[RMDB]
RNA sequence: GGGAACGACUCGAGUAGAGUCGAAAACUUAAUAAGUUCAAUAGAGCUAGUUUGCGUCAAAUUUUUGACGUAGCCCCCAUUGAACUCGAAAAUAAAUUCACACCUUUGAGUGUGGAGUCUACACCAGCAGGGGGGACGUUCGCGUCCCCCAAAAGAAACAACAACAACAAC
Reactivity to DMS in 0.01 (KOAc 150mM, MgCl2 10mM, bicine 150mM(pH8.5), 24C), signal-to-noise 1, nucleotides 027 to 129: c000u070u000a050a050u060a040a000g020u020u020c010a070a000u000a050g000a000g300c040u070a030g010u080u000u080g030c000g090u000c010a000a050a300u160u000u000u000u010g040a080c020g000u070a000g000c080c000c040c000c000a170u010u000g000a010a000c000u000c230g000a150a000a000a010u000a090a000a060u000u120c010a000c000a000c000c060u060u260u030g000a210g000u000g000u000g120g000a100g000u030c150u120a050c000a090c160c020a000g120c160a060g100
Reactivity to 2A3 in 0.01 (KOAc 150mM, MgCl2 10mM, bicine 150mM(pH8.5), 24C), signal-to-noise 1, nucleotides 027 to 129: c000u040u010a040a040u280a000a000g000u000u000c000a050a040u070a000g090a000g040c020u010a080g000u030u040u100g020c040g020u000c000a030a080a100u120u100u030u000u010g010a000c000g000u000a010g000c000c000c000c010c050a000u000u000g030a000a000c000u000c020g010a110a000a010a060u030a000a190a000u020u020c000a000c000a000c000c000u020u140u300g110a210g020u000g000u000g000g000a040g000u000c060u030a000c110a090c070c000a030g070c010a040g000